RNA sequence: GGGAACGACUCGAGUAGAGUCGAAAACAUAUCCUAUUUGGCAAUGAAUUUCAUAUACUAGAGUAUGUUCUUAAGAUUGGAUUGUCUAAAGUGAAAUUCAUUGCCAAAUAGGAUAUGGUAAUGCUAAUCCUAUUCGAAUCUUCGGAUUCGAAUAGGAAAAAGAAACAACAACAACAAC
Reactivity to 2A3 in 0.01 (KOAc 150mM, MgCl2 10mM, bicine 150mM(pH8.5), 24C), signal-to-noise 2, nucleotides 027 to 126: c000a000u000a000u010c000c000u000a000u000u000u000g000g000c000a000a010u000g000a000a000u000u000u000c020a030u050a020u020a090c040u040a020g010a010g050u090a060u130g050u020u030c020u090u200a120a040g010a150u050u140g030g010a020u030u060g030u080c010u030a050a010a020g000u000g010a000a020a000u000u010c000a000u010u000g010c000c000a000a000a000u000a000g000g000a000u000a000u000g000g000u020a000a000u040g010c000u010a010a070
Reactivity to DMS in 0.01 (KOAc 150mM, MgCl2 10mM, bicine 150mM(pH8.5), 24C), signal-to-noise 1, nucleotides 027 to 126: c000a010u000a000u000c010c000u000a000u000u000u000g000g020c010a000a000u020g000a000a000u000u020u000c000a010u000a150u030a090c160u010a030g000a040g010u000a070u000g000u010u000c010u000u030a120a150g000a090u020u010g010g000a030u010u000g010u000c000u000a010a050a180g010u000g000a000a000a000u000u000c000a000u000u000g010c000c000a000a000a000u000a000g000g000a000u000a000u010g010g020u000a040a040u010g000c070u000a020a180